[RMDB]
RNA sequence: GGGAACGACUCGAGUAGAGUCGAAAAAUCACUGGAAUUUCAGGAACCCCGAGAAGGAGGGGGUGCUAUAGAGGAGGAAGCAAAAGAGAAAACCAGCGAGGCUCCCAAGAAGGAUGAGGAGAAAGGGAAAGAAGGCGACAGUGAGAAGGAGUCCGAGCGGUUAGCAAAAAUUCGUUUUUGCUAACCGAAAAGAAACAACAACAACAAC
Reactivity to 2A3 in 0.01 (KOAc 150mM, MgCl2 10mM, bicine 150mM(pH8.5), 24C), signal-to-noise 1, nucleotides 027 to 156: a000u030c000a010c010u000g010g000a130a030u000u130u220c030a120g040g000a110a140c000c030c000c090g070a020g020a080a000g030g010a030g000g000g000g000g000u010g040c000u040a150u150a190g040a050g000g040a010g020g000a020a010g070c020a060a070a070a020g070a050g050a060a220a030a050c030c000a010g130c000g000a010g020g070c030u000c010c000c000a010a040g060a010a000g040g040a040u050g000a010g080g020a020g000a080a080a010g000g000g020a040a040a040g030a020a010g010g000c110g050a050c000a060g000u040g050a070g030a000a040g000g000a040g100u080c080c010g040a020g070
Overview
The record gives the reactivity of an RNA of 207 nucleotides to 2A3. For 2A3 the reverse transcriptase was SuperScript II with manganese. The reactions ran in a buffer of 150 mM KOAc, 10 mM MgCl2 and 150 mM bicine (pH 8.5), at 24 C. The 2A3 profile rests on 524 reads. Source: RMDB library OK3TST, as collected in RNAgym.